[RMDB]
RNA sequence: GGGAACGACUCGAGUAGAGUCGAAAAACUGGUGGUGCACCGUACGCGGUGCACCACCAGAAGGGUGACUGAUCGUACCCGCCAGCUGGCUAAUGUCAUAAUUAACAAAGUUGCUACUACAUCUGCAAAGUUUAAUCGAAAAAUUUGCCAGUGAUAUGAUGGCCUUGUCACAGAGAUCACAAGGGACACGGAGUUGACUUUUGCUCAAGGUGGAACGACAGAGCUGUGUAGGCAAGAUGAGAAAUUGCGAACUUGUUCGGCCAAAAAGGUAUCAGUUCGCUGAUACCAAAAGAAACAACAACAACAAC
Reactivity to 2A3 in 0.01 (KOAc 150mM, MgCl2 10mM, bicine 150mM(pH8.5), 24C), signal-to-noise 1, nucleotides 027 to 266: a000c000u000g000g010u040g200g000u020g050c000a000c000c050g050u120a030c300g000c050g070g010u010g000c000a000c070c000a000c020c000a000g000a000a000g010g030g000u060g130a200c110u070g040a090u030c030g000u000a000c000c030c000g010c000c000a000g010c020u000g030g000c000u020a040a030u070g060u080c010a070u060a300a050u110u040a060a070c020a060a200a170g090u030u010g040c050u010a060c000u140a090c060a180u200c150u120g080c030a010a050a000g020u130u080u160a100a000u070c060g100a210a010a050a000a000u020u000u000g010c000c030a010g000u020g040a020u030a030u300g120a060u080g090g000c010c010u010u090g000u000c000a000c010a020g090a000g020a200u090c070a020c000a060a020g030g040g030a040c000a000c080g050g040a110g040u060u010g190a120c000u170u220u170u230g040c000u000c000a000a080g070g040u010g000g030a030a020c000g000a020c010a000g000a000g000c060u020g010u000g050u230a010g000g040c060a030a020g080a120u160g020a050g060a070a180a060u140u010g000c020g020a000a000c090u050u040g090u050u160c050g080g040c020c090a100a050a000a090a110
Reactivity to DMS in 0.01 (KOAc 150mM, MgCl2 10mM, bicine 150mM(pH8.5), 24C), signal-to-noise 2, nucleotides 027 to 266: a100c000u000g010g060u030g010g020u020g090c050a000c060c000g050u000a130c180g080c080g110g130u000g030c000a030c070c030a000c000c000a000g010a050a030g000g000g050u010g020a030c040u000g010a060u000c030g010u000a110c020c010c010g030c040c060a180g010c040u010g000g030c020u000a040a020u010g010u010c130a090u020a090a060u000u010a030a040c020a040a120a150g000u010u000g030c040u020a090c140u010a120c210a080u040c110u000g000c010a050a040a130g000u020u000u040a020a060u020c050g000a060a110a020a070a040u030u000u000g000c010c030a080g010u000g000a090u000a060u040g000a100u000g000g030c030c030u000u010g000u010c020a030c050a060g000a110g000a060u000c070a070c110a120a130g000g000g010a200c070a000c020g000g020a080g020u000u000g010a060c070u020u010u030u000g010c020u010c040a110a020g000g010u020g010g050a110a110c030g020a030c090a040g000a140g010c060u000g030u000g000u010a060g010g000c010a020a040g020a140u010g020a150g020a060a050a100u010u000g000c080g010a080a110c070u000u020g010u010u000c070g000g000c020c020a020a020a060a050a160

The record gives the reactivity of an RNA of 307 nucleotides to 2A3 and DMS.